An RNA of 177 nucleotides, treated with DMS and 2A3 and read out base by base. The reactions ran in a buffer of 150 mM KOAc, 10 mM MgCl2 and 150 mM bicine (pH 8.5), at 24 C. Values cover nucleotides 27 to 126. Source: RMDB library OK2TRN, as collected in RNAgym.
RNA sequence: GGGAACGACUCGAGUAGAGUCGAAAAUCGCUUGAACCUGGGAAGCAGAGGUUGCAGUGAGCCAAGAUCGCGCCACUGCACUCCAGCCUGAUGACAGUGUGAGAUGCUGUCUCCAAAAAAAAAAAAACAAUCGUAACGUUUUCGAACGUUACGAUUGAAAAGAAACAACAACAACAAC
Reactivity to DMS in 0.01 (KOAc 150mM, MgCl2 10mM, bicine 150mM(pH8.5), 24C), signal-to-noise 1, nucleotides 027 to 126: u000c070g050c080u010u000g010a060a080c110c020u000g000g010g000a050a050g000c040a140g030a070g000g020u000u010g000c010a030g010u000g000a150g010c020c020a170a140g030a110u000c200g010c080g010c020c020a000c020u000g000c030a030c070u000c030c000a130g000c020c090u000g040a090u020g010a030c040a010g000u000g000u000g020a160g000a100u010g020c010u000g010u000c000u010c060c000a010a000a000a000a000a000a000a000a050a020a120a060a170
Reactivity to 2A3 in 0.01 (KOAc 150mM, MgCl2 10mM, bicine 150mM(pH8.5), 24C), signal-to-noise 1, nucleotides 027 to 126: u000c010g030c040u040u090g030a070a050c000c020u050g000g080g050a040a000g040c050a020g030a040g150g060u070u090g020c000a010g000u030g040a030g000c000c030a100a030g170a270u240c090g030c000g000c070c000a000c000u000g000c000a010c000u010c000c000a020g060c000c000u090g020a090u130g000a000c010a010g020u020g000u020g150a120g000a060u140g010c000u010g000u030c030u050c020c060a010a020a000a010a010a000a000a010a000a000a040a020a010